[RMDB]
RNA sequence: GGGAACGACUCGAGUAGAGUCGAAAAUUACGAUGCCCAGAUGCGCGUGCUCACCAAUCGCCAUCUGAUCGACGGUCGCUGGUGCGAGGUUAAGGUGCCCAACUCGAAGGGCAUGGGCCACCAGGUGACUGUAGCCUCCUUUCGAGGAGGCUACAGUAAAAGAAACAACAACAACAAC
Reactivity to DMS in 0.01 (KOAc 150mM, MgCl2 10mM, bicine 150mM(pH8.5), 24C), signal-to-noise 2, nucleotides 027 to 126: u010u030a050c120g010a120u000g020c040c070c020a110g010a010u000g010c190g020c000g020u000g040c040u010c120a100c090c040a140a130u010c010g030c020c000a020u000c030u000g010a040u010c090g000a080c060g000g000u010c020g000c030u000g000g020u010g010c050g040a110g000g020u010u000a100a100g020g020u010g000c010c000c000a120a170c130u000c100g000a070a150g010g000g010c050a010u000g010g020g010c070c080a050c020c010a080g000g000u000g000
Reactivity to 2A3 in 0.01 (KOAc 150mM, MgCl2 10mM, bicine 150mM(pH8.5), 24C), signal-to-noise 1, nucleotides 027 to 126: u150u020a050c140g060a050u140g040c000c050c000a010g010a060u090g020c100g000c010g030u070g020c060u060c090a060c010c030a040a030u110c010g000c000c000a000u000c010u030g040a100u070c090g090a050c030g000g140u030c040g040c140u080g000g000u070g020c050g020a050g130g000u090u090a200a040g080g000u010g010c040c010c020a080a190c060u080c110g120a140a050g040g000g000c000a010u010g070g000g020c020c030a010c010c040a030g060g060u030g040
The record gives the reactivity of an RNA of 177 nucleotides to DMS and 2A3. It was measured as part of the RMDB library OK2TRN. The reactions ran in a buffer of 150 mM KOAc, 10 mM MgCl2 and 150 mM bicine (pH 8.5), at 24 C.